[RMDB]
RNA sequence: GGGAACGACUCGAGUAGAGUCGAAAAGAAAGCGCGAGUCGUAUGAGGCCGGAAAUGCGACGAGGCUGCGAAGCAGUCGAGCGCGAAAGUCCAAGAUGCUGAAACCGGCCUAAAAGCAUCGGACGAAGGGUAAUUGGAUGUUCGCAUCCAAUUACCCAAAAGAAACAACAACAACAAC
Reactivity to DMS in 0.01 (KOAc 150mM, MgCl2 10mM, bicine 150mM(pH8.5), 24C), signal-to-noise 1, nucleotides 027 to 126: g020a260a060a180g000c000g010c050g010a270g020u000c000g050u000a000u000g000a090g010g010c000c000g010g000a100a170a000u000g010c010g030a000c050g000a110g000g000c020u000g000c010g040a230a300g000c000a000g050u000c020g000a140g000c000g030c000g000a030a090a140g090u000c000c000a040a010g000a000u000g020c000u000g000a000a140a140c000c000g000g000c000c010u000a000a100a100a010g020c010a000u010c000g000g000a000c000g090a020a010